[RMDB]
RNA sequence: GGGAACGACUCGAGUAGAGUCGAAAACUUAUCAGUUGCCGUAUCGGCUGCCGAUCGUCUACCACCAUGUCCAAAAGGAACCGUUUUCGAUACGGAAAACGUUUUUCUGAAUAGUAAAGGAGAGCUAGCGUGAUAGCGAGUUCGCUCGCUAUCACGCAAAAGAAACAACAACAACAAC
Reactivity to DMS in 0.01 (KOAc 150mM, MgCl2 10mM, bicine 150mM(pH8.5), 24C), signal-to-noise 1, nucleotides 027 to 126: c060u010u110a060u000c070a070g010u000u000g000c010c020g010u060a060u010c050g010g020c020u000g010c000c020g010a010u010c190g010u000c040u000a070c060c030a070c030c010a140u000g000u000c010c040a010a060a080a160g000g000a010a010c300c000g020u000u000u000u000c020g000a260u030a120c150g020g000a060a000a000a000c000g000u000u000u000u000u000c010u040g020a160a140u010a220g010u000a040a070a080g010g010a140g000a020g000c160u000a070